[RMDB]
RNA sequence: GGGAACGACUCGAGUAGAGUCGAAAACUCGCGCGAACAUCGAGGCGUGGAGCGCGACAUGAAUCAGCCUCCAUUAGAUUAAUGGUCGACAGAUCAGCGGCGAUCAGCGACCGAAUUAGAAGCCGCAACCGGAAGAGGAGACGCUCGACGGACGUCACGUAUAGGUGCAUUUCGAUGCACCUAUACGAAAAGAAACAACAACAACAAC
Reactivity to 2A3 in 0.01 (KOAc 150mM, MgCl2 10mM, bicine 150mM(pH8.5), 24C), signal-to-noise 1, nucleotides 027 to 156: c000u000c010g000c000g000c000g110a230a010c040a010u010c020g000a000g000g020c000g000u040g000g020a000g000c030g000c000g000a060c030a160u300g140a140a150u190c120a000g000c010c000u010c000c000a200u050u140a030g060a230u130u060a000a200u270g020g000u000c020g000a000c060a040g070a020u000c050a000g000c000g000g000c030g000a000u000c000a000g040c000g000a000c000c000g040a000a060u180u010a090g140a150a000g000c000c040g000c010a000a030c020c080g050g040a170a000g000a040g060g010a150g070a010c010g040c060u000c040g000a000c000g000g100a030c000g010u080c030a040